[RMDB]
RNA sequence: GGGAACGACUCGAGUAGAGUCGAAAAGACGCCUGAUGGCGAACGUGCGCAAGAUAAGAAUGGUGGUAUAUACUGCCUAGAAUAACUAAUGGACGGCAGAGCGCACGAACCACCAAGGUCCACCAGACCACUAUGCUCACUUCGGUGAGCAUAGUGGAAAAGAAACAACAACAACAAC
Reactivity to DMS in 0.01 (KOAc 150mM, MgCl2 10mM, bicine 150mM(pH8.5), 24C), signal-to-noise 2, nucleotides 027 to 126: g000a300c020g000c010c000u000g070a100u060g050g030c000g040a160a180c020g050u000g000c000g010c010a250a160g000a150u100a090a100g000a040a210u000g000g060u000g000g000u050a050u060a050u000a230c000u000g000c000c000u000a230g000a150a060u010a140a150c220u020a050a140u070g040g000a070c270g000g000c010a020g020a040g040c000g000c000a000c050g000a040a100c050c020a110c090c050a150a050g000g020u050c000c000a020c020c000a210g030a140
Reactivity to 2A3 in 0.01 (KOAc 150mM, MgCl2 10mM, bicine 150mM(pH8.5), 24C), signal-to-noise 4, nucleotides 027 to 126: g140a000c000g070c040c030u270g190a170u290g000g050c000g000a010a020c000g020u030g000c000g000c060a070a070g020a230u110a070a150g050a100a050u070g000g000u000g000g040u010a050u000a000u020a170c000u000g000c000c000u000a010g120a110a100u230a120a010c090u100a190a070u130g050g080a000c010g030g000c000a000g000a030g000c010g000c000a000c000g000a010a000c040c000a010c000c030a030a030g050g040u000c000c000a010c000c000a000g020a030